[RMDB]
RNA sequence: GGGAACGACUCGAGUAGAGUCGAAAAAAUUUCGGGUUUAUACGCAUUUGUGUAUUCGUGUGGUUUGUUCAGUUUCCAGUUGUAACCUGUAUUACUAUUUGGGUUUGUCUUAUUACCGUCUACGUUGCAACAGUGGGAAAUUCGUUUCCCACUGUUGAAAAGAAACAACAACAACAAC
Reactivity to DMS in 0.01 (KOAc 150mM, MgCl2 10mM, bicine 150mM(pH8.5), 24C), signal-to-noise 4, nucleotides 027 to 126: a060a080u000u000u000c030g010g000g010u010u000u010a050u010a060c070g020c130a170u010u010u010g020u000g010u000a040u000u000c070g000u000g020u000g010g010u000u000u000g020u010u000c060a100g010u000u000u000c030c000a060g000u010u010g000u000a040a050c080c050u010g010u000a070u000u000a070c090u010a080u000u000u000g000g000g000u000u000u000g010u000c040u000u000a080u010u000a100c060c030g000u010c050u000a070c130g010u000u000g000
Reactivity to 2A3 in 0.01 (KOAc 150mM, MgCl2 10mM, bicine 150mM(pH8.5), 24C), signal-to-noise 1, nucleotides 027 to 126: a030a040u220u050u060c130g030g030g010u130u100u000a110u040a050c060g000c050a160u080u100u240g100u040g010u050a010u040u010c060g030u050g020u040g080g100u030u090u070g130u130u080c040a030g020u000u100u000c000c020a020g010u040u020g050u040a080a070c020c000u050g010u040a090u040u010a030c020u020a060u090u040u000g050g000g000u030u060u080g050u030c030u040u030a100u040u040a060c040c010g030u000c020u050a030c070g100u000u050g050